[RMDB]
RNA sequence: GGGAACGACUCGAGUAGAGUCGAAAAGAUAUGGAUAACUUAGUACCAUAUUCACCGUUGAAAUCGGAAACGAUGGAGGUGAUAUGGGAAUUGUUAUCCUAAGUCAAAAGGGGCCUUCGGGCCCCAAGUUGAGCAUUAUGUUCGCAUAAUGCUCAACAAAAGAAACAACAACAACAAC
Reactivity to DMS in 0.01 (KOAc 150mM, MgCl2 10mM, bicine 150mM(pH8.5), 24C), signal-to-noise 1, nucleotides 027 to 126: g000a030u000a300u010g000g000a020u000a020a000c010u000u000a030g010u000a160c000c000a000u000a020u020u000c010a020c020c000g020u000u000g020a120a200a020u000c000g000g000a090a090a160c000g030a030u000g010g000a070g000g030u000g000a000u000a000u000g000g010g000a100a100u000u000g010u010u010a000u000c000c000u010a010a060g020u020c050a060a070a220a130g000g000g010g000c000c000u000u020c190g060g040g010c000c000c000c000a000a000